Source: RMDB library OK1LIB, as collected in RNAgym. Chemical mapping of a 177-nucleotide RNA with DMS and 2A3. The RNA was probed in 150 mM KOAc, 10 mM MgCl2 and 150 mM bicine (pH 8.5) at 24 C.

[RMDB]
RNA sequence: GGGAACGACUCGAGUAGAGUCGAAAACUGGUAGGGGAUGCCCUGCAGCAGCUCGGGGGCUGCAUAUGCCACCAACCCGCAGAAGUUCUUGCUUAAUCUCUGUUGGCCACUGUCAUCCCGCAGGCAGAAGACUGUAGCCUUUCGAGGCUACAGUCUUAAAAGAAACAACAACAACAAC
Reactivity to DMS in 0.01 (KOAc 150mM, MgCl2 10mM, bicine 150mM(pH8.5), 24C), signal-to-noise 1, nucleotides 027 to 126: c030u000g020g020u000a030g000g000g000g000a060u000g020c090c040c000u000g000c000a010g040c050a050g020c020u020c050g020g020g010g000g000c000u000g050c010a140u020a010u040g010c040c000a010c070c100a080a140c140c010c040g020c030a050g020a070a070g010u010u020c070u010u000g030c040u010u020a010a120u000c040u020c000u020g000u040u040g000g000c020c030a140c090u040g020u000c060a070u000c000c000c010g000c140a150g000g030c090a060g020
Reactivity to 2A3 in 0.01 (KOAc 150mM, MgCl2 10mM, bicine 150mM(pH8.5), 24C), signal-to-noise 1, nucleotides 027 to 126: c020u010g040g010u070a060g000g000g000g040a030u090g070c010c000c000u020g000c030a050g010c000a000g020c050u040c080g020g030g070g000g010c000u000g030c000a030u030a010u170g020c000c000a040c000c020a090a020c010c000c030g000c040a000g070a130a010g070u100u090c070u100u160g020c000u080u060a070a080u070c000u000c010u060g090u130u010g010g000c020c000a080c030u040g000u110c030a090u020c030c020c020g000c030a040g020g000c020a030g110
Annotation: The DMS profile rests on 1,451 reads.